An RNA of 177 nucleotides, treated with DMS and 2A3 and read out base by base. DMS (dimethyl sulfate) methylates the pairing face of unpaired adenines and cytosines. It was measured as part of the RMDB libraries RFM100 and RFMREP.
[RMDB]
RNA sequence: GGGAACGACUCGAGUAGAGUCGAAAACUGGGUAGAGUGGCAUCUGGUUGGUAGUGCCUGCCUCAUAUUAGCCAGGGACAAAGCAACGCCUUGUUUAUCCCAGCUUGGCUUUUGGUCUGUGCCUGUGGUCAUGACAGCUAUUCGUAGCUGUCAUGACAAAAGAAACAACAACAACAAC
Reactivity to DMS in 0.01 (KOAc 150mM, MgCl2 10mM, bicine 150mM(pH8.5), 24C), signal-to-noise 3, nucleotides 027 to 126: c050u010g000g000g010u000a030g020a150g010u000g010g000c080a100u000c050u010g000g010u000u010g020g000u000a070g020u010g010c020c030u000g000c060c030u000c120a060u000a060u000u000a060g000c050c030a030g000g000g000a030c080a060a070a060g000c030a060a040c300g020c030c020u000u000g000u000u010u010a120u040c020c010c000a200g000c060u000u010g010g010c040u010u000u010u010g000g000u000c060u020g000u000g010c060c000u000g000u000g000
Reactivity to 2A3 in 0.01 (KOAc 150mM, MgCl2 10mM, bicine 150mM(pH8.5), 24C), signal-to-noise 3, nucleotides 027 to 126: c030u010g040g020g000u050a100g020a040g130u090g030g000c020a040u040c050u020g070g060u060u020g070g050u080a040g030u040g050c000c040u020g050c000c000u070c040a050u050a080u110u120a010g050c030c000a000g010g000g010a040c020a050a100a000g040c010a050a030c040g010c010c000u010u000g050u040u120u070a080u100c000c010c000a000g020c030u020u020g010g000c000u090u110u040u080g040g010u050c040u020g000u040g050c000c000u090g070u150g060